An RNA of 177 nucleotides, treated with 2A3 and DMS and read out base by base. The data come from the RNA Mapping Database (RMDB), library OK2TRN.
RNA sequence: GGGAACGACUCGAGUAGAGUCGAAAAGGAUGCAACGUAGUAAUAUGUGUGACAGCUACCUCUUGAGUUACACAUUACUAUUCAUAAUGUCAUUCAAGAGGUAUAUGACGUUAUGAAAUCUGUAUCGCUACAUGUGUCUAUUCGUAGAUACAUGUAGAAAAGAAACAACAACAACAAC
Reactivity to 2A3 in 0.01 (KOAc 150mM, MgCl2 10mM, bicine 150mM(pH8.5), 24C), signal-to-noise 9, nucleotides 027 to 126: g040g010a010u020g010c020a050a030c070g020u010a020g010u010a020a070u060a130u230g050u010g030u030g130a270c050a040g020c020u030a050c010c000u020c010u010u020g020a020g010u040u110a010c010a000c000a010u010u030a010c010u040a040u050u040c010a000u010a020a010u010g000u000c010a010u060u030c010a020a010g020a010g040g010u040a050u010a000u060g000a000c010g000u000u010a010u010g030a040a050a060u080c080u050g020u020a010u020c010g000
Reactivity to DMS in 0.01 (KOAc 150mM, MgCl2 10mM, bicine 150mM(pH8.5), 24C), signal-to-noise 9, nucleotides 027 to 126: g010g000a020u000g010c020a030a110c300g000u000a030g010u000a020a030u000a070u000g020u000g020u000g010a120c230a060g000c040u000a100c010c010u000c010u000u000g000a040g010u000u000a050c090a010c020a020u000u000a010c030u000a070u000u000c040a030u000a000a000u000g010u000c010a020u000u000c010a010a010g000a010g000g020u000a050u000a010u000g000a020c010g010u000u000a010u000g000a020a100a090u010c170u000g020u000a020u000c020g010
The 2A3 profile rests on 185,885 reads.